[RMDB]
Structure probing data (DMS and 2A3) for a 177-nucleotide construct. The RNA was probed in 150 mM KOAc, 10 mM MgCl2 and 150 mM bicine (pH 8.5) at 24 C. DMS adducts were read by reverse transcription with MarathonRT. Reactivities are given for positions 27 through 126.
RNA sequence: GGGAACGACUCGAGUAGAGUCGAAAAGAUAUGGAGAUCUACCCACCGCUAGACACGCGAAGAACUCGGAAACGAGGGAGCGUGUAUAGCGAGGAUCUCCUAAGUCAAAGACAUGUUCGCAUGUCAACUCAGUAGUACUCUUCGGAGUACUACUGAGAAAAGAAACAACAACAACAAC
Reactivity to DMS in 0.01 (KOAc 150mM, MgCl2 10mM, bicine 150mM(pH8.5), 24C), signal-to-noise 3, nucleotides 027 to 126: g020a090u000a230u000g000g010a010g010a020u000c000u000a180c020c010c010a300c130c000g000c010u010a020g000a000c000a020c000g010c010g020a120a100g010a080a210c000u010c000g000g020a110a070a220c000g010a030g000g000g000a050g010c000g000u000g010u000a010u000a010g010c000g010a040g000g010a000u000c000u000c000c000u000a030a080g000u020c100a100a090a150g000a030c010a000u020g010u000u000c220g040c000a000u000g000u000c000a100a150
Reactivity to 2A3 in 0.01 (KOAc 150mM, MgCl2 10mM, bicine 150mM(pH8.5), 24C), signal-to-noise 4, nucleotides 027 to 126: g050a060u220a140u300g030g000a010g010a000u000c000u100a300c020c030c010a010c000c000g000c000u000a000g010a000c000a010c000g080c020g240a300a060g020a070a030c000u010c000g020g020a110a090a050c000g000a000g000g000g030a020g000c000g000u000g000u010a000u000a000g000c010g000a010g000g000a000u000c000u000c000c000u040a100a020g110u100c120a180a050a070g010a000c010a020u010g030u070u120c300g000c180a000u020g010u020c010a000a060